The record gives the reactivity of an RNA of 177 nucleotides to 2A3 and DMS.
[RMDB]
RNA sequence: GGGAACGACUCGAGUAGAGUCGAAAAUCAAACCCGCCCUUGUAGCUCAGUGGUAGAGCGCUUCACUCGUAUUCCAAUACUGCCAUGAAGAGGUCCGCGGUUCAAUCCCGCGUGGUCGCAAAAAAAAGUUAAGACUUACCUUCGGGUAAGUCUUAACAAAAGAAACAACAACAACAAC
Reactivity to 2A3 in 0.01 (KOAc 150mM, MgCl2 10mM, bicine 150mM(pH8.5), 24C), signal-to-noise 1, nucleotides 027 to 126: u070c030a000a080a160c000c010c010g010c000c010c010u020u030g120u100a010g010c020u030c070a060g010u060g070g060u130a010g050a020g040c010g040c000u080u060c030a040c070u100c030g080u080a140u090u060c020c000a030a000u060a210c030u020g000c020c000a060u130g050a060a030g070a050g000g020u000c000c030g020c010g040g000u070u090c040a030a090u080c000c000c000g000c010g060u070g000g040u020c000g040c160a000a020a000a000a020a020a000a060
Reactivity to DMS in 0.01 (KOAc 150mM, MgCl2 10mM, bicine 150mM(pH8.5), 24C), signal-to-noise 2, nucleotides 027 to 126: u010c080a090a110a200c020c020c010g000c090c010c040u010u000g000u010a030g020c020u020c050a090g000u010g020g000u000a100g000a070g020c030g000c050u020u010c050a020c040u010c050g020u010a120u000u000c110c110a080a060u010a070c070u020g000c080c060a090u000g040a060a100g000a080g000g020u010c010c020g010c030g000g000u020u000c250a040a300u030c290c010c000g000c020g000u000g030g010u000c010g020c100a000a000a000a020a040a010a080a070
Source information
The 2A3 profile rests on 994 reads.